[RMDB]
RNA sequence: GGGAACGACUCGAGUAGAGUCGAAAACGCGAGCGGGAGGACGGCGGGGCGAUAGCAGGUCUGUGAUGCCCUCAGACGCCCUGGGCCGCACGCGCGCUACACUGGCGGGGCCAGCCGGCGCCCGCGAUGACCGUCCUGAUUUCGAUCAGGACGGUCAAAAAGAAACAACAACAACAAC
Reactivity to DMS in 0.01 (KOAc 150mM, MgCl2 10mM, bicine 150mM(pH8.5), 24C), signal-to-noise 1, nucleotides 027 to 126: c060g000c060g020a110g010c000g060g020g020a140g020g030a050c010g000g000c030g000g000g000g000c070g010a110u010a040g020c300a030g000g000u030c060u030g000u020g020a080u050g030c090c000c010u000c100a130g000a070c030g070c000c030c030u020g000g000g000c000c000g000c060a000c000g010c020g000c000g010c040u030a100c150a230c020u000g000g010c030g020g000g010g050c010c040a140g000c280c160g040g000c000g020c030c000c010g000c060g010a050
Reactivity to 2A3 in 0.01 (KOAc 150mM, MgCl2 10mM, bicine 150mM(pH8.5), 24C), signal-to-noise 2, nucleotides 027 to 126: c090g010c000g000a020g030c000g000g100g140a090g150g060a070c020g000g000c000g000g000g000g000c000g030a100u160a020g060c070a030g040g120u040c040u020g080u020g050a100u240g010c000c020c000u000c000a040g000a100c000g000c000c000c000u050g000g150g030c000c000g060c010a020c000g020c000g010c000g000c000u020a000c080a000c130u090g070g000c010g000g000g040g020c000c020a030g210c070c260g020g000c000g030c020c000c000g010c040g000a010